[RMDB]
RNA sequence: GGGAACGACUCGAGUAGAGUCGAAAAUCAACAGCUGGCUAGCGGCAGGCCUAGGAACAGAACCUGAUGUUCCUGCUACAGACAACAUCUCUUCUUCACUGGUGUAUUUCCUCUUCCCCAGACGGAAGACAGAUGUUCAAAUAUUUAUUGACUAACAGUGGGCAUAUAAUUUCGAUUAUAUGCCCACAAAAGAAACAACAACAACAAC
Reactivity to DMS in 0.01 (KOAc 150mM, MgCl2 10mM, bicine 150mM(pH8.5), 24C), signal-to-noise 2, nucleotides 027 to 156: u010c040a100a080c140a100g020c020u010g010g010c020u010a110g070c050g010g040c020a130g030g020c150c000u010a080g040g050a070a050c050a200g010a050a120c130c080u010g010a160u000g020u000u010c020c000u000g010c070u010a130c070a100g020a160c000a040a050c040a140u000c020u000c030u000u000c010u000u010c040a100c040u000g000g050u010g020u000a060u000u000u010c010c020u010c020u010u010c010c030c030c020a300g020a080c100g020g030a030a020g010a030c150a050g000a070u000g000u010u000c070a040a050a120u010a150u000u000u000a130u020u000g000a150c060u000a100a080c080a170
Reactivity to 2A3 in 0.01 (KOAc 150mM, MgCl2 10mM, bicine 150mM(pH8.5), 24C), signal-to-noise 2, nucleotides 027 to 156: u060c030a030a080c020a000g030c020u040g070g000c020u060a020g020c030g050g000c020a030g030g000c010c030u080a010g000g030a060a010c010a060g060a050a030c000c020u080g040a060u050g010u020u010c010c000u030g010c020u080a050c020a050g120a070c000a030a000c000a020u000c000u000c000u060u040c000u080u090c030a030c070u000g010g000u050g020u060a090u040u150u110c030c050u060c010u050u030c050c020c000c000a030g020a070c060g040g000a010a000g000a000c030a000g020a000u010g010u050u020c000a000a140a010u070a080u020u180u090a080u160u140g050a060c090u300a020a000c010a000

Source: RMDB library OK3TST, as collected in RNAgym. Structure probing data (DMS and 2A3) for a 207-nucleotide construct. The DMS profile rests on 1,917 reads. For 2A3, 1,231 sequencing reads were counted. For DMS the reverse transcriptase was MarathonRT. High DMS reactivity at an A or C suggests that its Watson-Crick edge is free. Reactivities are given for positions 27 through 156. Conditions: 150 mM KOAc, 10 mM MgCl2 and 150 mM bicine (pH 8.5), 24 C.